RNA sequence: GGGAACGACUCGAGUAGAGUCGAAAAGAUAUGGAUUUAGCAACAGCUCGUGACUCGGAAACGAGUCCGAGACAUGCUACAUCCUAAGUCAAAGGAAUAGGCUCCACUUCGGUGGAGCCUAUUCCAAUCUAUAUAACCGCUUCGGCGGUUAUAUAGAAAAAGAAACAACAACAACAAC
Reactivity to DMS in 0.01 (KOAc 150mM, MgCl2 10mM, bicine 150mM(pH8.5), 24C), signal-to-noise 1, nucleotides 027 to 126: g000a040u010a290u000g000g000a020u000u000u000a000g000c010a030a060c270a170g000c010u020c010g010u020g010a020c000u020c010g000g000a080a080a130c000g000a010g010u010c000c000g000a000g000a100c060a140u000g000c010u000a010c060a010u000c000c000u000a030a120g000u000c030a120a090a140g010g020a020a010u000a010g020g000c000u000c000c000a010c010u000u020c120g040g030u020g020g020a020g010c000c000u000a000u000u000c010c010a030a030